Chemical mapping of a 207-nucleotide RNA with DMS and 2A3. It was measured as part of the RMDB library OK3TST.
RNA sequence: GGGAACGACUCGAGUAGAGUCGAAAACGAUCAGUACGUUCGCGUACUGAUCGAAGCUACUGGAGACAGUAGCAAGUCUAAGACCUUGUUAGGGGGAAACAAGGAAAAAUGGAGGAAGGACGGACCUCCAUACUUAGACAACCCCUAACCGUCCAAAUACUGAGGGAUUAUUCGUAAUCCCUCAGUAAAAAGAAACAACAACAACAAC
Reactivity to DMS in 0.01 (KOAc 150mM, MgCl2 10mM, bicine 150mM(pH8.5), 24C), signal-to-noise 2, nucleotides 027 to 156: c040g000a000u000c010a030g030u010a000c000g040u000u010c300g010c040g150u000a020c000u010g000a000u010c000g020a000a080g010c010u000a010c020u010g000g000a300g020a300c010a020g010u010a030g000c000a000a060g000u000c000u020a040a050g000a300c030c010u000u020g010u000u000a120g030g030g000g050g040a300a050a020c020a040a000g000g000a000a050a080a120a120u010g000g000a030g000g050a010a020g030g010a030c030g010g000a300c020c000u000c010c000a050u000a020c020u000u010a030g000a030c020a070a090c050c010c010c100u000a060a060c030c000g000u000c010c000a100a150a300
Reactivity to 2A3 in 0.01 (KOAc 150mM, MgCl2 10mM, bicine 150mM(pH8.5), 24C), signal-to-noise 4, nucleotides 027 to 156: c010g010a000u000c000a000g010u010a000c010g020u040u090c260g000c000g090u000a000c000u000g000a000u000c000g000a000a000g000c000u000a000c000u000g010g020a060g020a040c000a000g000u000a000g000c000a000a010g000u000c000u000a000a050g020a210c000c000u030u030g050u060u210a300g000g000g000g000g040a020a010a000c010a000a000g050g000a050a080a050a020a000u030g000g000a000g020g020a090a240g020g000a000c020g000g030a100c000c000u000c000c000a000u020a010c000u000u000a000g000a000c010a010a150c020c010c000c010u050a030a010c000c000g000u000c000c010a000a030a000